[RMDB]
RNA sequence: GGGAACGACUCGAGUAGAGUCGAAAACCGUUACAGAAAGCCUUCAAGCAAAUACAGGAAAUAAGCUUUAUAUCCAAGAGGAUUUAAGAGGAAAGAAAGUGGAUAACAUCAAAAGCUUAGCGACACAAAAAAAGGUCGCUAUUUCAUGGAUGCCUAACUACUACCGAGGUUUCGACCUCGGUAGUAGAAAAGAAACAACAACAACAAC
Reactivity to 2A3 in 0.01 (KOAc 150mM, MgCl2 10mM, bicine 150mM(pH8.5), 24C), signal-to-noise 1, nucleotides 027 to 156: c000c000g070u060u110a070c040a100g020a030a030a000g000c030c000u070u140c080a050a000g000c020a030a070a070u110a160c090a030g010g130a040a050a040u090a020a020g010c010u010u130u020a130u090a030u060c030c000a100a070g120a110g250g010a000u010u040u050a140a000g030a010g000g120a160a070a000g040a050a040a000g080u040g060g030a140u220a170a000c010a060u260c040a070a100a000a000g040c010u000u000a000g000c010g000a000c000a000c030a190a190a150a000a000a000a080g050g010u010c000g000c000u000a000u020u040u030c010a020u060g040g030a000u050g100c040c020u050a030a040

This 207-nucleotide RNA was probed chemically with 2A3. The RNA was probed in 150 mM KOAc, 10 mM MgCl2 and 150 mM bicine (pH 8.5) at 24 C. It was measured as part of the RMDB library OK3TST. The 2A3 profile rests on 519 reads. Values are in units of 0.01, from 0 to 300, in steps of 10. Values cover nucleotides 27 to 156.